[RMDB]
RNA sequence: GGGAACGACUCGAGUAGAGUCGAAAAUCAUGUUUGUUCGCAAACAUGAAAAGAAAGCACGAAAUUAAAAUAAAAGGGAAGGGAACGUGCACCCACCCAUAAAAACGCACGUGUUCGCACGUGCGAAGACGUUCUUGUUGUUCGCAACAAGAACGUCAAAAGAAACAACAACAACAAC
Reactivity to 2A3 in 0.01 (KOAc 150mM, MgCl2 10mM, bicine 150mM(pH8.5), 24C), signal-to-noise 1, nucleotides 027 to 126: u000c000a000u000g010u000u010u000g060u030u030c190g000c080a000a030a000c000a000u000g010a010a010a010a020g110a040a010a020g000c020a010c010g130a150a120a120u180u090a060a100a050a130u190a030a180a040a050g060g040g040a080a120g020g010g010a070a040c000g010u010g020c010a060c000c000c000a000c000c010c010a070u270a070a130a010a000a000c000g060c040a000c070g010u010g020u040u020c180g000c020a000c040g020u000g020c010g000a000a000